[RMDB]
RNA sequence: GGGAACGACUCGAGUAGAGUCGAAAAGAAUGGAGGAGGUGCCUCACGACUGUCCAGGGGCCGACAGCGCCCAGGCGGGCAGAGGGGCUUCAUGUCAGGGAUGCCCCAACCAGCGGCUGUGCGCUUAUACUAGCCCCUGGUUCGCCAGGGGCUAGUAAAAAGAAACAACAACAACAAC
Reactivity to DMS in 0.01 (KOAc 150mM, MgCl2 10mM, bicine 150mM(pH8.5), 24C), signal-to-noise 2, nucleotides 027 to 126: g020a110a060u010g010g010a080g010g010a150g000g020u000g000c020c030u000c060a120c070g000a110c060u020g000u020c020c070a180g000g000g030g020c040c100g000a070c210a050g000c060g030c010c040c030a030g010g000c050g010g010g010c120a040g010a180g010g010g010g010c010u000u000c010a050u010g010u010c210a150g000g000g000a030u010g000c010c000c010c020a050a090c100c060a190g010c050g000g010c020u000g020u000g000c020g000c000u000u000a150